[RMDB]
RNA sequence: GGGAACGACUCGAGUAGAGUCGAAAAGGGAUUUGUCCCUGGCCUGUUGAAACUGUUCUUGAACAGUUUCCUGAUAUAAGGAUUGCCCACAUGGCACUCAGCGUUGAAGAAAAAGCUCAGAUCGUAAUAAUUCGAUAACCUUCGGGUUAUCGAAUUAAAAAGAAACAACAACAACAAC
Reactivity to DMS in 0.01 (KOAc 150mM, MgCl2 10mM, bicine 150mM(pH8.5), 24C), signal-to-noise 4, nucleotides 027 to 126: g000g000g010a080u030u030u060g040u000c000c000c000u000g000g020c010c000u020g030u020u010g010a020a010a010c010u010g010u000u010c050u020u030g000a020a040c000a020g010u000u000u000c010c130u000g020a110u010a070u030a070a100g020g000a070u000u000g000c000c010c150a160c160a090u040g000g010c030a060c070u000c030a070g000c120g000u000u000g000a120a130g010a060a090a110a180a100g000c050u010c070a060g010a140u010c080g020u020a110a170
Reactivity to 2A3 in 0.01 (KOAc 150mM, MgCl2 10mM, bicine 150mM(pH8.5), 24C), signal-to-noise 2, nucleotides 027 to 126: g010g000g000a040u170u200u300g090u110c000c000c060u020g000g020c010c010u020g020u020u120g010a000a080a000c000u000g020u000u010c030u060u300g040a000a000c000a000g000u040u010u020c000c010u110g010a040u070a020u010a280a010g060g040a000u000u130g060c060c040c010a150c110a080u200g060g010c070a030c050u070c000a010g000c000g050u070u110g030a080a100g070a010a020a060a000a000g000c000u000c020a060g010a170u110c010g000u010a000a170